[RMDB]
RNA sequence: GGGAACGACUCGAGUAGAGUCGAAAAGCCUCGUAAAAAGCGGCAACAAUGUAAUUGCAAACAACAAUUACGACUACGCUCUUGCUGCAUAAGUAAUAGCGUACCUGGCUAUUUAAAUAGCCACGUCAAUCCUGCUGAUGUCUGAUAAGCUGGUGCGGUGUAAGGUGAAGUUCGCUUCACCUUACACAAAAGAAACAACAACAACAAC
Reactivity to DMS in 0.01 (KOAc 150mM, MgCl2 10mM, bicine 150mM(pH8.5), 24C), signal-to-noise 2, nucleotides 027 to 156: g040c030c020u020c090g030u020a070a060a110a100a040g020c030g010g010c040a100a250c100a110a100u030g010u000a000a010u020u000g000c010a080a200a210c050a130a100c000a020a030u010u000a030c030g040a210c070u000a010c030g010c000u000c040u010u000g000c020u010g020c280a110u000a100a040g020u000a050a040u000a080g040c050g000u000a090c150c060u000g040g010c030u000a040u030u010u010a120a150a100u000a010g020c000c000a010c030g030u000c040a060a080u000c050c010u020g040c030u000g000a070u020g010u000c050u000g000a120u000a100a100g010c000u020g010g010u010g020c000g010
Reactivity to 2A3 in 0.01 (KOAc 150mM, MgCl2 10mM, bicine 150mM(pH8.5), 24C), signal-to-noise 4, nucleotides 027 to 156: g010c000c000u000c020g050u070a080a090a020a000a000g050c040g040g000c020a050a040c040a070a180u210g010u020a020a020u010u010g070c130a160a090a040c010a060a050c000a000a040u000u000a010c020g050a050c040u050a010c010g000c000u000c010u010u010g000c020u030g030c050a120u080a300a010g000u020a010a020u000a010g000c000g010u010a040c000c040u030g010g000c010u000a020u040u210u120a150a300a130u030a010g000c000c000a010c010g030u040c010a000a070u050c000c010u010g010c010u010g010a040u070g080u050c040u020g070a080u030a100a030g000c010u020g010g040u040g060c070g040